RNA sequence: GGGAACGACUCGAGUAGAGUCGAAAACGCAACUACCGUUGGUGUUGCACAGAAUACCAUAUUUUAAACCAUAUUGGACCUUGAGUCCAGGCAAUCAUACGUGCGGUCAGUCAGAUCGUACUCAAACUAUUAGGACAAACUUCGGUUUGUCCUAAUAAAAAGAAACAACAACAACAAC
Reactivity to DMS in 0.01 (KOAc 150mM, MgCl2 10mM, bicine 150mM(pH8.5), 24C), signal-to-noise 5, nucleotides 027 to 126: c150g020c030a020a010c020u010a040c040c050g040u000u000g030g060u000g000u000u000g010c020a140c160a060g010a100a100u000a140c020c010a060u010a020u000u010u010u000a030a110a210c070c020a170u000a110u000u000g010g030a020c020c010u010u010g000a160g020u000c000c000a030g000g010c180a070a060u010c140a070u010a090c200g010u000g000c000g000g000u000c010a150g010u010c300a150g000a010u000c020g040u000a000c000u000c150a040a070a130c220
Reactivity to 2A3 in 0.01 (KOAc 150mM, MgCl2 10mM, bicine 150mM(pH8.5), 24C), signal-to-noise 3, nucleotides 027 to 126: c050g010c000a000a000c010u200a030c040c030g280u060u300g000g020u010g000u020u020g050c020a010c020a030g150a080a030u080a120c020c040a030u010a150u120u190u050u150a100a080a050c060c010a080u100a180u200u060g000g000a000c000c010u090u300g040a050g070u020c000c010a000g020g000c030a000a110u130c010a080u060a120c070g020u030g030c000g000g030u020c000a040g140u110c050a020g030a000u010c020g000u000a000c010u010c030a080a170a050c060
The data come from the RNA Mapping Database (RMDB), library OK2TST. Structure probing data (DMS and 2A3) for a 177-nucleotide construct. The 2A3 profile rests on 2,143 reads. Conditions: 150 mM KOAc, 10 mM MgCl2 and 150 mM bicine (pH 8.5), 24 C. DMS adducts were read by reverse transcription with MarathonRT.